An RNA of 177 nucleotides, treated with 2A3 and DMS and read out base by base.
Reactivities are rounded to 0.1 and cut off at 0 and 3.
The DMS profile rests on 3,283 reads.
2A3 adducts were read by reverse transcription with SuperScript II with manganese.
The 2A3 profile rests on 371 reads.
For DMS the reverse transcriptase was MarathonRT.
The reactions ran in a buffer of 150 mM KOAc, 10 mM MgCl2 and 150 mM bicine (pH 8.5), at 24 C.
[RMDB]
RNA sequence: GGGAACGACUCGAGUAGAGUCGAAAAGGGAAUUACGGGUUCUUGAUGAGCAUUGGUGAUAGGAGGUGUGGGCUUGGUUAGUAGAGGUAGAAUUAUGAUUGUUCUUGUGAGUUUCAGUAAGAGGUGGUGGGUAAUAAGCAUUCGUGCUUAUUACCCAAAAAGAAACAACAACAACAAC
Reactivity to 2A3 in 0.01 (KOAc 150mM, MgCl2 10mM, bicine 150mM(pH8.5), 24C), signal-to-noise 1, nucleotides 027 to 126: g020g000g000a030a030u050u070a020c180g000g100g000u080u090c000u100u170g140a220u050g000a090g000c040a060u000u180g000g130u020g090a230u150a150g010g020a000g090g000u260g000u210g140g000g050c050u030u050g040g000u060u020a020g030u000a010g000a000g000g160u030a000g140a160a000u210u150a120u290g070a000u000u000g000u060u000c000u020u000g150u000g080a300g010u000u000u000c000a010g000u020a140a050g000a000g030g170u010g030g010
Reactivity to DMS in 0.01 (KOAc 150mM, MgCl2 10mM, bicine 150mM(pH8.5), 24C), signal-to-noise 2, nucleotides 027 to 126: g000g000g010a110a030u010u010a120c080g020g000g010u010u000c030u050u010g000a180u010g000a100g010c060a080u040u020g000g030u040g000a150u030a050g020g010a080g000g020u030g000u020g000g010g020c060u030u000g010g000u030u010a040g000u020a060g000a050g010g000u010a040g010a090a060u030u000a140u060g000a100u010u010g000u000u000c170u000u000g000u010g000a110g020u010u010u000c000a110g030u020a040a050g020a050g000g040u020g030g010